Structure probing data (2A3 and DMS) for a 177-nucleotide construct. Source: RMDB library RFMREP, as collected in RNAgym. The 2A3 profile rests on 1,433 reads. The RNA was probed in 150 mM KOAc, 10 mM MgCl2 and 150 mM bicine (pH 8.5) at 24 C.

RNA sequence: GGGAACGACUCGAGUAGAGUCGAAAACAUCUAAGGAAGGCAGCAGGCGCGCAAAUUACCUAUCCCUGACUCAGGGAGGUAGUAAACAGAAAUAAUGGCACAUGUUUUAAACAUGUGAUCGGAACGACCUCAUUAUUUCGUUCGCGAAAUAAUGAGGAAAAGAAACAACAACAACAAC
Reactivity to 2A3 in 0.01 (KOAc 150mM, MgCl2 10mM, bicine 150mM(pH8.5), 24C), signal-to-noise 2, nucleotides 027 to 126: c010a040u080c010u070a050a010g120g000a050a090g050g000c000a000g000c010a030g030g000c020g000c000g000c030a010a050a030u050u030a030c000c010u020a140u140c020c000c000u110g170a300c060u090c170a000g010g000g000a000g020g000u020a010g000u060a030a080a040c070a020g120a030a080a000u130a000a080u130g000g000c000a000c000a020u000g020u070u120u040u130a120a300a000c010a000u020g010u000g040a120u050c030g050g060a090a040c040g070a100
Reactivity to DMS in 0.01 (KOAc 150mM, MgCl2 10mM, bicine 150mM(pH8.5), 24C), signal-to-noise 2, nucleotides 027 to 126: c070a070u000c070u010a080a070g040g010a130a130g000g010c020a010g020c020a070g010g030c070g000c060g000c100a060a050a020u000u000a020c000c010u010a120u020c000c000c000u000g000a170c140u010c030a050g000g000g000a000g000g000u000a030g010u000a080a040a110c190a050g000a060a070a070u000a050a050u000g010g000c000a010c000a000u000g000u000u000u020u000a070a070a020c000a000u000g000u000g010a050u010c080g020g010a070a100c190g000a160